[RMDB]
RNA sequence: GGGAACGACUCGAGUAGAGUCGAAAAAUCCAGAAGGAUUUAGCAAGUCACUGGAAGCGAGUCUUGCAUGGGUCUUAGCGAUGAGGCUUGUGAAGCGUAGACAGCGGGUACAAAAGCCGCGUAAUUGUUAUUGCUAUCUUUUCGAAGAUAGCAAUAAAAAAGAAACAACAACAACAAC
Reactivity to DMS in 0.01 (KOAc 150mM, MgCl2 10mM, bicine 150mM(pH8.5), 24C), signal-to-noise 9, nucleotides 027 to 126: a060u010c000c000a080g020a130a110g010g000a020u000u000u020a130g010c140a120a070g010u010c020a070c030u000g000g010a080a140g010c090g000a070g010u000c000u000u000g010c020a030u000g000g000g010u000c010u000u000a030g010c270g010a170u000g010a040g000g000c010u000u000g010u000g000a080a100g010c100g000u010a040g010a040c070a160g010c010g000g000g020u020a080c170a070a090a100a150g010c010c010g010c020g000u020a040a080u010u020g010
Reactivity to 2A3 in 0.01 (KOAc 150mM, MgCl2 10mM, bicine 150mM(pH8.5), 24C), signal-to-noise 7, nucleotides 027 to 126: a000u020c010c000a020g080a110a100g090g010a010u060u060u050a050g030c070a060a010g010u030c020a000c090u020g020g040a040a000g050c030g030a040g040u010c000u010u060g040c010a020u040g020g000g010u000c000u030u050a050g030c020g030a030u090g010a020g010g000c000u020u020g020u020g040a070a020g080c030g040u010a020g010a050c020a030g010c010g000g020g040u140a090c060a080a160a010a010g080c000c010g010c010g040u070a060a130u100u090g050

Chemical mapping of a 177-nucleotide RNA with DMS and 2A3. The reactions ran in a buffer of 150 mM KOAc, 10 mM MgCl2 and 150 mM bicine (pH 8.5), at 24 C. For 2A3 the reverse transcriptase was SuperScript II with manganese.